Chemical mapping of a 177-nucleotide RNA with DMS and 2A3.
For 2A3, 1,097 sequencing reads were counted.
It was measured as part of the RMDB library RFM100.
The RNA was probed in 150 mM KOAc, 10 mM MgCl2 and 150 mM bicine (pH 8.5) at 24 C.
For 2A3 the reverse transcriptase was SuperScript II with manganese.

RNA sequence: GGGAACGACUCGAGUAGAGUCGAAAAAGUCCGUGGAGGUACGCCUCCACGGACAGCGGGAGAGGUUCUAGCAAAACCCUCUAUAAAAAACUAAGGAAAGAGCAGCGACCAUACGUGGUCGCUGCAAUAUAGGUAUCAAGUUCGCUUGAUACCUAUAAAAAGAAACAACAACAACAAC
Reactivity to DMS in 0.01 (KOAc 150mM, MgCl2 10mM, bicine 150mM(pH8.5), 24C), signal-to-noise 2, nucleotides 027 to 126: a090g000u010c020c010g060u010g000g000a010g010g000u050a060c210g030c020c000u000c000c000a000c020g000g000a010c030a020g000c190g000g000g010a040g000a110g020g000u000u000c020u010a220g000c160a150a120a000a010c050c010c000u000c020u000a090u050a000a020a100a080a180a080c120u040a070a110g000g000a040a100a100g000a100g010c000a050g020c070g000a070c020c000a020u020a060c110g010u000g000g020u000c000g030c000u030g090c110a000a000
Reactivity to 2A3 in 0.01 (KOAc 150mM, MgCl2 10mM, bicine 150mM(pH8.5), 24C), signal-to-noise 2, nucleotides 027 to 126: a010g020u020c000c000g000u000g000g000a010g040g080u010a040c220g030c020c010u010c000c000a000c000g010g000a020c000a000g030c020g090g020g000a020g010a060g020g020u040u000c060u100a030g050c100a130a070a000a000c000c050c020u000c000u000a180u270a040a170a030a010a010a020c100u140a120a000g140g070a120a060a060g050a100g020c010a000g010c000g000a000c010c000a000u010a110c200g060u100g000g000u000c010g020c020u010g020c000a000a000